Chemical mapping of a 207-nucleotide RNA with 2A3. For 2A3 the reverse transcriptase was SuperScript II with manganese. The reactions ran in a buffer of 150 mM KOAc, 10 mM MgCl2 and 150 mM bicine (pH 8.5), at 24 C.

[RMDB]
RNA sequence: GGGAACGACUCGAGUAGAGUCGAAAAGGACAGUGCUGAAAUGUAGGGCUGGCACUACCUCUUGGCCUCAGUGAUGUCAUGUGGGUUUUGGGUUACUGAGGAUGAAGGAUUAUGGUUAAGCUCUCUCCUUUGAAAGUCUCCUUUUUCAGGGAAGCCAUCCGUAAUCAGCUUUCGAGCUGAUUACGGAAAAAGAAACAACAACAACAAC
Reactivity to 2A3 in 0.01 (KOAc 150mM, MgCl2 10mM, bicine 150mM(pH8.5), 24C), signal-to-noise 3, nucleotides 027 to 156: g020g020a030c060a050g040u040g080c030u070g000a040a070a090u130g010u130a060g000g000g010c020u010g020g000c010a010c040u050a040c000c030u060c060u070u110g230g020c010c000u040c010a010g010u030g050a030u050g110u180c040a040u130g030u170g050g120g040u090u080u120u090g040g020g000u000u020a010c000u010g000a010g010g010a020u050g060a030a000g040g020a030u080u040a090u280g040g000u040u080a070a040g000c000u000c000u030c020u000c020c000u050u100u130g100a110a060a010g060u040c040u070c090c000u000u090u010u010u030c020a000g000g000g080a030a010g070c090c000a010
For 2A3, 1,395 sequencing reads were counted. The data come from the RNA Mapping Database (RMDB), library OK3TST.